[RMDB]
RNA sequence: GGGAACGACUCGAGUAGAGUCGAAAAGAAUGUGUGUGUCAAUACCACCCGCAGUUACGAUCAAACCUUCACCGGCUAAGGCUUCAGUAGCAGGACCCACGCAAAGAUUAUUUUUAACGCCAUCUUGAAAACAACAAUGAUUCGUCAUUGUUGUUUUAAAAGAAACAACAACAACAAC
Reactivity to DMS in 0.01 (KOAc 150mM, MgCl2 10mM, bicine 150mM(pH8.5), 24C), signal-to-noise 9, nucleotides 027 to 126: g010a110a090u010g010u020g020u010g010u000g010u010c070a090a090u010a110c150c040a060c030c020c010g020c060a060g010u010u020a070c100g000a070u010c080a050a100a090c060c020u000u000c060a080c080c040g000g000c060u010a070a070g000g010c030u000u000c070a070g020u010a050g010c030a070g000g010a090c040c010c020a050c090g020c060a050a060a080g000a100u010u010a040u010u020u010u010u010a050a110c120g010c050c060a070u000c030u000u000g000
Reactivity to 2A3 in 0.01 (KOAc 150mM, MgCl2 10mM, bicine 150mM(pH8.5), 24C), signal-to-noise 9, nucleotides 027 to 126: g110a050a090u090g020u010g010u000g010u010g030u090c050a050a070u060a170c030c010a020c000c010c010g010c030a030g030u070u090a050c050g010a050u060c060a060a060a070c000c000u040u040c030a030c060c000g060g000c030u050a070a040g050g000c010u070u040c030a070g020u080a020g020c020a010g020g050a030c010c020c000a020c020g020c030a040a060a030g030a030u060u080a100u070u230u060u080u130a090a020c060g020c040c010a040u030c030u030u040g040